Source: RMDB library M2PK90, as collected in RNAgym. This 177-nucleotide RNA was probed chemically with 2A3 and DMS. The RNA was probed in 150 mM KOAc, 10 mM MgCl2 and 150 mM bicine (pH 8.5) at 24 C. DMS adducts were read by reverse transcription with MarathonRT. High 2A3 reactivity points to a flexible backbone, as in loops and unpaired stretches. For 2A3 the reverse transcriptase was SuperScript II with manganese. Values cover nucleotides 27 to 126. Reactivities are rounded to 0.1 and cut off at 0 and 3.
RNA sequence: GGGAACGACUCGAGUAGAGUCGAAAAGCUGAGUAUACGAGGUUAGUUCAUUCUCGUAUGCAUGAUUGGACAAAUUAAAAUCUCAAUUUGGAUCAGGGCCACCCUCCAGCGACGGCCGAACAUACAACAUUUAACCCAAAUUCGUUUGGGUUAAAUGAAAAGAAACAACAACAACAAC
Reactivity to 2A3 in 0.01 (KOAc 150mM, MgCl2 10mM, bicine 150mM(pH8.5), 24C), signal-to-noise 7, nucleotides 027 to 126: g010c010u030g030a000g040u030a000u000a010c010g000a010g060g020u120u160a050g090u200u230c060a050u200u050c010u000c000g000u010a000u010g000c010a060u090g020a070u030u110g050g030a010c020a010a030a040u070u130a090a130a150a250u100c060u020c130a030a050u030u020u060g100g020a140u070c060a060g030g020g000c010c010a010c010c000c000u040c040c010a010g000c010g030a030c040g020g010c010c010g020a020a000c010a020u140a030c040a070a010
Reactivity to DMS in 0.01 (KOAc 150mM, MgCl2 10mM, bicine 150mM(pH8.5), 24C), signal-to-noise 8, nucleotides 027 to 126: g010c030u000g000a170g020u000a010u000a010c000g010a010g010g010u000u010a110g000u000u020c180a090u000u000c000u000c000g000u000a000u000g010c030a090u010g000a070u000u010g000g000a090c030a030a030a050u010u010a040a050a090a110u010c140u000c100a040a040u000u000u000g010g000a110u010c040a090g010g000g010c010c030a070c030c010c030u000c110c010a020g000c020g010a100c130g000g010c020c040g000a020a030c090a060u000a130c190a030a080